[RMDB]
RNA sequence: GGGAACGACUCGAGUAGAGUCGAAAAGAAAGGCAGCAAGUGCAGCCCACGCAGGGGCAUGCUUUUGCAUGCCCAGUCGAGCCCACGACUCAGGGCAGCUGCGACACUGAGGGCAGCUGCCGAAAGAAUGGUACCUACUGUUCGCAGUAGGUACCAUAAAAGAAACAACAACAACAAC
Reactivity to 2A3 in 0.01 (KOAc 150mM, MgCl2 10mM, bicine 150mM(pH8.5), 24C), signal-to-noise 1, nucleotides 027 to 126: g080a050a080a000g030g000c010a010g030c010a130a090g070u090g100c030a030g010c000c000c030a060c050g070c030a130g040g000g000g000c020a070u020g000c020u200u300u200u290g000c010a040u010g000c000c000c000a000g030u000c000g000a040g000c010c010c000a000c000g020a010c010u030c120a050g130g110g000c010a000g000c000u010g000c010g040a020c040a020c110u170g110a250g040g040g010c000a000g020c010u000g000c000c010g000a000a010a000g070a010
Reactivity to DMS in 0.01 (KOAc 150mM, MgCl2 10mM, bicine 150mM(pH8.5), 24C), signal-to-noise 2, nucleotides 027 to 126: g010a110a160a080g000g010c030a030g020c020a160a090g010u000g020c070a060g000c030c020c040a110c180g000c170a100g010g010g010g010c010a020u000g010c010u010u030u000u000g000c020a040u000g010c000c000c050a020g010u000c020g010a130g000c000c000c010a300c030g030a050c010u010c140a180g010g000g000c030a100g030c020u000g010c010g010a150c140a110c180u010g060a140g030g000g040c030a030g010c010u000g010c000c000g010a020a040a110g010a150